Description:
The record gives the reactivity of an RNA of 170 nucleotides to 2A3 and DMS. The reactions ran in a buffer of 150 mM KOAc, 10 mM MgCl2 and 150 mM bicine (pH 8.5), at 24 C. The DMS profile rests on 8,864 reads. It was measured as part of the RMDB library 15KLIB. In probing experiments dimethyl sulfate is read out at A N1 and C N3, which are open when not base-paired. For 2A3, 5,228 sequencing reads were counted.

RNA sequence: GGGAACGACUCGAGUAGAGUCGAAAAGGGACGCUCUCAAGAAGGAGGAGAUUUCCCGAAAGCUGGAGACUCGCGGAAUUUCAUUCAAGAAGAAGGUAACGGAGAAAGGAGCGGGCCUCCCGAUCCGACAGUUUCGGCUUCGGCCGAAACAAAAGAAACAACAACAACAAC
Reactivity to 2A3 in 0.01 (KOAc 150mM, MgCl2 10mM, bicine 150mM(pH8.5), 24C), signal-to-noise 3, nucleotides 027 to 129: g020g010g000a010c040g010c010u020c000u010c020a040a150g080a050a010g090g020a040g050g000a000g000a030u040u030u030c000c000c000g000a050a030a000g090c120u040g010g020a000g000a020c000u000c020g030c000g080g070a030a030u040u050u060c050a070u090u010c020a080a030g070a030a040g020a000a010g200g000u080a110a030c070g040g010a060g010a040a040a000g010g000a050g000c000g010g010g000c000c000u030c000c000c000g000a050u060c030c000g040a050c050a040
Reactivity to DMS in 0.01 (KOAc 150mM, MgCl2 10mM, bicine 150mM(pH8.5), 24C), signal-to-noise 4, nucleotides 027 to 129: g010g000g000a050c190g010c040u040c070u000c040a220a040g050a040a100g000g040a040g020g000a070g000a150u020u040u050c030c040c050g020a050a160a030g050c100u020g000g000a060g000a070c030u020c030g000c000g000g000a190a040u000u000u060c110a150u000u040c040a070a140g020a030a060g020a110a050g100g020u000a070a140c110g030g000a080g000a100a040a140g000g000a220g030c010g000g000g000c020c050u070c000c030c030g010a050u040c040c010g030a150c000a070